[RMDB]
RNA sequence: GGGAACGACUCGAGUAGAGUCGAAAAUAACUGCAGGUUGCUCCGGUUGAUCGAUAGAUUGUAAGGUUUGUCGGUCGUUUUAAUCGUGUCUUACAACACGAUGAUGUUACCCCAUAAUGACCUGAGACACCUUCGGAUACUUCGGUAUCCGAAGGUGAAAAGAAACAACAACAACAAC
Reactivity to DMS in 0.01 (KOAc 150mM, MgCl2 10mM, bicine 150mM(pH8.5), 24C), signal-to-noise 2, nucleotides 027 to 126: u020a070a100c070u020g010c040a050g000g000u010u000g000c070u030c050c090g020g000u030u020g000a020u020c000g000a030u000a010g000a030u010u000g000u060a160a130g010g020u000u000u000g000u000c000g010g000u000c000g000u000u020u010u010a160a010u000c010g020u010g010u010c020u000u080a160c300a100a020c000a010c000g000a020u000g010a090u000g010u000u010a140c080c000c040c050a120u010a070a030u000g000a000c010c010u010g000a120g030a290
Reactivity to 2A3 in 0.01 (KOAc 150mM, MgCl2 10mM, bicine 150mM(pH8.5), 24C), signal-to-noise 2, nucleotides 027 to 126: u070a000a000c020u060g130c050a000g030g020u000u080g060c030u060c050c010g010g000u070u100g000a010u000c000g020a020u050a030g000a030u000u110g110u240a070a170g080g000u000u010u040g030u030c040g030g000u010c040g000u000u000u190u300a040a010u000c010g000u010g000u000c040u130u220a060c050a050a000c000a040c040g000a010u000g000a030u130g030u030u090a140c000c000c000c000a000u100a200a030u200g030a030c000c000u000g020a000g030a010